This 177-nucleotide RNA was probed chemically with 2A3 and DMS. The RNA was probed in 150 mM KOAc, 10 mM MgCl2 and 150 mM bicine (pH 8.5) at 24 C. Source: RMDB library OK2TST, as collected in RNAgym. For 2A3, 1,210 sequencing reads were counted.
RNA sequence: GGGAACGACUCGAGUAGAGUCGAAAAUCUAUUUCCUCGAAGGUACGCGCCUUAUCUACUUGCGCAGUAAAAGUAGUCGAGACUGAUGGAUACUUGCUGCUUAUUACACGCUUUGCUUCAUCUUGUAGUAAAUUACUGCGUUCGCGCAGUAAUUUACAAAAGAAACAACAACAACAAC
Reactivity to 2A3 in 0.01 (KOAc 150mM, MgCl2 10mM, bicine 150mM(pH8.5), 24C), signal-to-noise 2, nucleotides 027 to 126: u100c050u060a200u010u030u000c000c000u030c040g090a020a000g100g020u030a070c030g030c020g020c080c000u120u030a120u020c050u040a080c060u080u130g010c050g030c140a060g040u080a000a050a050a000g000u010a020g020u130c090g040a010g010a110c060u150g090a100u170g140g090a050u080a180c000u000u020g020c020u040g000c020u030u050a160u040u040a070c050a000c070g030c010u050u050u050g080c030u080u120c020a180u020c020u060u080g080u030a070
Reactivity to DMS in 0.01 (KOAc 150mM, MgCl2 10mM, bicine 150mM(pH8.5), 24C), signal-to-noise 1, nucleotides 027 to 126: u010c100u000a120u000u000u000c000c010u000c100g010a050a050g000g000u010a110c150g010c120g020c020c060u000u000a080u010c020u000a110c090u000u010g000c040g000c040a120g020u000a020a060a060a000g000u000a010g020u010c100g000a020g030a110c100u010g020a110u000g050g000a090u000a110c040u010u010g010c020u030g000c010u000u010a080u000u000a020c020a070c080g010c030u000u000u000g000c060u000u000c140a160u000c030u000u000g000u000a180